[RMDB]
RNA sequence: GGGAACGACUCGAGUAGAGUCGAAAAGUUGAUUAUGUAUAUUCGGGCGCUUCUGGUAUUGUUAAGCCGGAAGAUAUGGUUGUAGAUCUUGGGAUAAAUAAUUGGAGCGUUUUACUUACUCCUUAUGAUCGUAAUGGUAUUUCGAUACCAUUACGAUAAAAGAAACAACAACAACAAC
Reactivity to 2A3 in 0.01 (KOAc 150mM, MgCl2 10mM, bicine 150mM(pH8.5), 24C), signal-to-noise 1, nucleotides 027 to 126: g060u080u040g080a130u020u240a010u300g020u080a170u000a070u160u170c040g000g010g100c060g000c000u020u000c020u070g010g010u110a120u220u140g070u100u120a050a020g000c010c020g000g070a010a000g020a010u060a040u070g030g060u140u050g080u020a050g000a100u000c000u070u060g040g000g000a020u010a170a190a000u070a050a020u120u040g000g000a000g050c020g010u000u040u270u080a010c020u070u050a040c010u020c010c000u030u160a190u160g110
Reactivity to DMS in 0.01 (KOAc 150mM, MgCl2 10mM, bicine 150mM(pH8.5), 24C), signal-to-noise 2, nucleotides 027 to 126: g020u000u010g010a090u010u010a030u010g000u000a090u010a100u010u000c160g020g000g020c090g030c010u000u000c000u010g020g030u010a050u000u010g010u000u010a070a190g020c010c010g000g000a030a020g000a060u000a050u000g010g010u000u000g030u000a090g000a050u000c030u000u000g020g010g010a050u010a050a030a020u010a020a050u010u000g000g010a030g010c060g010u000u000u000u010a040c080u000u010a090c110u000c020c020u000u000a080u010g010